[RMDB]
RNA sequence: GGGAACGACUCGAGUAGAGUCGAAAAUCCCUUUCCCAUCAGAUCUGAAUACCGAUCUUGUGGUCGAAAAAGGAGGAAAAGCAGCAUUCAGACUGGCCUUGGCCUCUUUGCUGGCACAGCCCUGCUCGAAAUAACUGACAUUCGUGUCAGUUAUUUCAAAAGAAACAACAACAACAAC
Reactivity to DMS in 0.01 (KOAc 150mM, MgCl2 10mM, bicine 150mM(pH8.5), 24C), signal-to-noise 9, nucleotides 027 to 126: u010c000c000c000u000u000u000c010c010c000a100u030c220a050g000a040u000c010u010g010a160a100u020a140c190c090g000a020u010c010u010u030g020u010g010g010u010c090g000a030a060a060a090a080g000g000a050g000g010a070a070a080a070g010c030a020g010c050a090u010u020c140a090g000a080c060u010g000g020c070c040u010u010g000g000c010c020u000c030u000u010u010g010c080u010g000g000c030a050c080a120g000c050c020c020u010g000c070u010c150
Reactivity to 2A3 in 0.01 (KOAc 150mM, MgCl2 10mM, bicine 150mM(pH8.5), 24C), signal-to-noise 9, nucleotides 027 to 126: u020c000c000c010u010u020u010c020c000c000a030u040c030a010g010a030u010c010u090g070a160a090u170a290c050c050g000a010u010c000u010u040g030u030g020g040u050c070g050a030a020a010a030a020g070g030a030g010g070a020a080a040a020g030c020a010g000c020a040u080u190c040a060g110a200c060u070g040g020c020c010u070u120g060g010c000c010u020c010u060u050u070g030c040u040g020g020c020a020c030a100g020c010c000c000u040g020c030u030c040